Source: RMDB library OK1LIB, as collected in RNAgym. Chemical mapping of a 177-nucleotide RNA with DMS and 2A3. The DMS profile rests on 2,344 reads. 2A3 adducts were read by reverse transcription with SuperScript II with manganese. Reactivities are given for positions 27 through 126. Conditions: 150 mM KOAc, 10 mM MgCl2 and 150 mM bicine (pH 8.5), 24 C.
[RMDB]
RNA sequence: GGGAACGACUCGAGUAGAGUCGAAAAUUUUAUGUGCAUAAAGAUUUAGUUGCAGAAACAUCAAAUCCUGUAACGUCAACACGCUCUAUUGGUGGCGUAGCAAGAAAUAUUGCUGAGAACUUAGGUACUUCCCAUCAGGUUUCGACCUGAUGGGAAGAAAAGAAACAACAACAACAAC
Reactivity to DMS in 0.01 (KOAc 150mM, MgCl2 10mM, bicine 150mM(pH8.5), 24C), signal-to-noise 2, nucleotides 027 to 126: u000u030u000u000a000u060g040u000g040c040a010u060a060a070a110g000a090u030u040u020a070g020u000u000g000c000a000g000a110a010a070c070a060u060c240a050a140a140u010c030c000u000g000u010a050a020c010g000u020c020a010a060c050a010c260g000c110u040c110u020a050u050u000g000g000u010g010g000c020g000u000a080g000c010a020a040g000a110a070a020u010a120u020u000g020c010u000g000a100g000a040a050c040u000u020a040g000g000u000a110
Reactivity to 2A3 in 0.01 (KOAc 150mM, MgCl2 10mM, bicine 150mM(pH8.5), 24C), signal-to-noise 3, nucleotides 027 to 126: u070u090u010u000a160u090g070u070g030c060a060u090a180a200a090g130a070u090u170u150a140g040u020u010g010c000a000g090a090a130a050c060a050u070c110a030a040a050u000c010c020u010g020u050a030a030c000g070u040c020a080a030c040a040c090g080c020u050c030u120a150u090u190g110g040u130g020g000c030g040u030a010g000c000a000a010g070a230a150a050u300a060u040u010g030c040u080g020a030g020a170a060c070u140u130a030g000g070u000a090